Description:
Chemical mapping of a 177-nucleotide RNA with DMS and 2A3. The RNA was probed in 150 mM KOAc, 10 mM MgCl2 and 150 mM bicine (pH 8.5) at 24 C. Source: RMDB libraries RFM100 and RFMREP, as collected in RNAgym.
[RMDB]
RNA sequence: GGGAACGACUCGAGUAGAGUCGAAAAACUUACCUUAAGGGUGGCGAUGAGCCAUUGUUCAGGCCGGCUAAUGCUGCGCAUACCGCGCUGGUGUUUGUCACAGAGCAGUGCUCUCAGACCUGCUACUGUCUGAUUUGGAUUUCGAUCCAAAUCAGACAAAAGAAACAACAACAACAAC
Reactivity to DMS in 0.01 (KOAc 150mM, MgCl2 10mM, bicine 150mM(pH8.5), 24C), signal-to-noise 2, nucleotides 027 to 126: a110c160u020u010a170c010c050u000u010a060a130g010g010g050u000g040g020c020g000a160u010g000a150g000c300c000a000u000u050g030u000u020c000a090g040g000c290c110g000g000c050u020a030a110u020g000c020u010g090c010g030c020a210u000a050c250c110g010c020g000c080u000g000g000u000g010u020u000u010g020u030c020a080c020a160g000a080g000c000a020g000u000g030c010u000c000u000c030a080g000a280c220c060u000g000c010u040a090c150u000
Reactivity to 2A3 in 0.01 (KOAc 150mM, MgCl2 10mM, bicine 150mM(pH8.5), 24C), signal-to-noise 4, nucleotides 027 to 126: a000c080u100u120a150c000c000u100u110a110a060g080g030g000u000g030g050c080g020a040u110g020a040g020c020c000a010u000u020g030u000u020c040a050g110g050c070c060g000g000c030u050a010a000u010g010c010u020g010c040g020c030a030u210a260c080c110g000c010g020c070u090g000g030u020g000u020u000u040g030u030c020a080c030a040g000a010g000c010a010g010u050g070c020u010c000u000c030a080g010a170c000c020u050g010c020u060a070c040u050